Structure probing data (2A3) for a 177-nucleotide construct. The 2A3 profile rests on 645 reads. As a SHAPE reagent, 2A3 marks flexible, mostly unpaired nucleotides at the ribose 2'-OH. For 2A3 the reverse transcriptase was SuperScript II with manganese. It was measured as part of the RMDB library RFM100.

RNA sequence: GGGAACGACUCGAGUAGAGUCGAAAAGCGUGGCGUUUCCUCUCGCCCCAAUUAUGCGCAGGCGCGCAUCACCGAAGUGUUACCGCCCACGCAUUCCCGCGCGCGCCCAUUCGGCACGCCCUCCUCCAGCUUCCUUUCCGUUCGCGGAAAGGAAGCUAAAAGAAACAACAACAACAAC
Reactivity to 2A3 in 0.01 (KOAc 150mM, MgCl2 10mM, bicine 150mM(pH8.5), 24C), signal-to-noise 1, nucleotides 027 to 126: g000c000g000u030g020g000c000g000u020u000u040c010c030u050c000u000c020g000c010c010c000c010a000a130u150u080a030u130g060c070g000c060a090g090g300c060g080c030g020c060a010u010c020a020c010c050g050a050a030g070u090g110u080u030a020c030c000g120c140c030c000a000c010g000c000a010u000u000c010c000c010g000c010g000c010g000c000g000c000c000c000a060u120u120c020g000g030c030a000c020g060c000c010c020u000c000c010u000c030c020